[RMDB]
RNA sequence: GGGAACGACUCGAGUAGAGUCGAAAAGCACGGGUCAUGAUAAUAUGUAUUGGUAGUUUAGGUGACAUCACGCCAAUGUUAGCGAUGCGCACAAUGUGUGAAGCGCGGGAGGUAAGCACAGUGAUUGGUACUGGAUAACCUUCGGGUUAUCCAGUACAAAAGAAACAACAACAACAAC
Reactivity to 2A3 in 0.01 (KOAc 150mM, MgCl2 10mM, bicine 150mM(pH8.5), 24C), signal-to-noise 3, nucleotides 027 to 126: g040c000a000c000g010g020g000u050c020a020u040g190a060u110a140a170u170a180u200g110u120a120u030u050g040g070u080a140g080u050u100u070a160g010g020u110g030a030c020a040u120c000a020c010g060c010c030a050a000u130g060u110u060a010g050c010g060a040u040g030c010g050c010a010c030a080a140u190g040u020g040u030g050a130a020g040c000g000c000g000g000g000a040g030g050u120a030a010g060c010a030c020a060g020u030g080a070u060u070g030
Reactivity to DMS in 0.01 (KOAc 150mM, MgCl2 10mM, bicine 150mM(pH8.5), 24C), signal-to-noise 2, nucleotides 027 to 126: g000c090a080c120g010g000g000u020c070a010u030g000a050u030a100a080u030a130u000g000u020a070u000u000g000g000u010a050g020u030u040u020a110g000g010u020g050a160c140a080u000c080a070c070g000c070c050a020a020u010g040u000u000a030g020c030g000a070u000g010c110g010c020a060c040a040a050u020g030u030g000u000g000a030a030g050c050g000c020g000g000g010a110g030g000u010a050a050g010c030a040c090a080g000u000g000a160u020u020g010